Chemical mapping of a 177-nucleotide RNA with 2A3.
RNA sequence: GGGAACGACUCGAGUAGAGUCGAAAAAAUGUCUUUAUUCGCGAGACAACUUCAAUCCUUGACUGCCAGUGGAAUCCGCACACAGCAAGUUCGUCUUGCGAGCACGGAAGUAUCAUUCCACACAAAGGGACGCAUGCCUAUUCGUAGGCAUGCGUCCAAAAGAAACAACAACAACAAC
Reactivity to 2A3 in 0.01 (KOAc 150mM, MgCl2 10mM, bicine 150mM(pH8.5), 24C), signal-to-noise 1, nucleotides 027 to 126: a000a000u300g000u170c210u160u120u210a300u200u000c000g000c070g030a000g000a000c000a040a050c000u300u210c030a020a070u040c030c000u000u140g300a300c020u000g000c000c150a090g000u000g100g000a140a100u190c100c000g090c000a000c000a000c000a080g100c000a000a000g000u000u000c100g110u020c000u000u050g000c000g000a000g000c090a000c000g170g000a160a000g120u000a090u300c000a090u000u000c000c000a000c000a030c020a050a210a160g070
2A3 adducts were read by reverse transcription with SuperScript II with manganese.
Source: RMDB library OK1LIB, as collected in RNAgym.